[RMDB]
RNA sequence: GGGAACGACUCGAGUAGAGUCGAAAAGGGGUCUCCCACGAUGGUAGUACAGACAUGCUGAUAAUGGCUGAAGCCUCCACGGCCAUUAACAGCAACAGCUGUACGAGAGUAGUGGGAGACGGAGGCACCCAAAGGUGACUUGUUCGCAAGUCACCAACAAUGACUUAAAGUUCGCUUUAAGUCAUUGAAAAGAAACAACAACAACAAC
Reactivity to DMS in 0.01 (KOAc 150mM, MgCl2 10mM, bicine 150mM(pH8.5), 24C), signal-to-noise 3, nucleotides 027 to 156: g000g020g020g030u000c000u010c000c000c000a030c040g000a180u040g000g020u000a220g020u000a020c000a030g010a090c030a180u010g060c000u000g020a200u000a020a010u000g000g000c000u000g010a070a120g030c020c020u000c010c020a300c080g020g000c000c000a040u000u000a030a080c020a050g010c000a110a070c080a120g010c000u010g010u000a020c010g000a300g000a100g000u000a220g020u000g010g000g010a030g010a010c000g010g000a030g050g040c020a090c000c000c010a020a110a120g020g030u000g000a040c000u000u000g010u000u000c300g000c020a030a020g010u000c010a020c000c010a020a080
Reactivity to 2A3 in 0.01 (KOAc 150mM, MgCl2 10mM, bicine 150mM(pH8.5), 24C), signal-to-noise 5, nucleotides 027 to 156: g100g000g030g000u000c000u000c000c000c000a000c010g010a020u050g010g030u010a020g000u000a010c010a010g140a130c140a300u220g040c000u010g000a090u010a040a000u000g000g000c000u010g010a080a010g000c000c000u000c010c000a010c010g000g000c000c010a000u000u010a050a020c000a000g050c030a080a040c140a090g020c000u000g000u000a000c000g000a010g010a000g000u030a010g000u000g000g000g010a000g000a000c000g000g000a000g000g010c000a050c000c010c000a070a110a030g000g000u010g000a000c000u010u010g030u070u100c180g010c120a000a000g000u000c000a000c000c000a000a000